The record gives the reactivity of an RNA of 177 nucleotides to DMS and 2A3. Reactivities are given for positions 27 through 126. For DMS the reverse transcriptase was MarathonRT.
[RMDB]
RNA sequence: GGGAACGACUCGAGUAGAGUCGAAAAAGACUAGAAUUCUGGGAACCCUGUGCAAUUCAGUCUGCUCUCCCUUGUGGACCCUGGUAAAGAAAAGCCUCAGCUCAUAGUGAACACAGCAGACCUAGAAAGUACUGAUCUUAUUCGUAAGAUCAGUACUAAAAGAAACAACAACAACAAC
Reactivity to DMS in 0.01 (KOAc 150mM, MgCl2 10mM, bicine 150mM(pH8.5), 24C), signal-to-noise 4, nucleotides 027 to 126: a040g010a070c010u000a140g030a080a050u000u000c060u000g000g010g010a120a180c150c100c030u000g020u010g010c140a030a030u000u000c030a050g010u000c010u000g000c140u000c110u000c020c010c020u010u000g040u010g000g000a100c050c030c030u000g000g020u000a050a070a090g010a070a120a100a110g000c030c030u010c060a040g000c050u000c050a070u000a070g010u000g000a040a080c050a060c090a030g020c050a040g010a120c040c020u000a090g000a090a090
Reactivity to 2A3 in 0.01 (KOAc 150mM, MgCl2 10mM, bicine 150mM(pH8.5), 24C), signal-to-noise 2, nucleotides 027 to 126: a010g040a020c030u090a060g050a080a130u090u020c030u070g070g020g040a170a170c000c010c020u070g050u040g050c060a030a000u040u040c010a000g020u020c000u000g000c010u010c010u020c000c030c070u020u080g040u060g030g020a050c000c020c040u060g040g040u130a120a120a050g090a050a140a030a000g010c000c010u030c030a010g020c010u020c020a020u030a040g080u080g050a050a000c040a000c000a020g000c030a000g000a020c000c000u030a040g090a050a160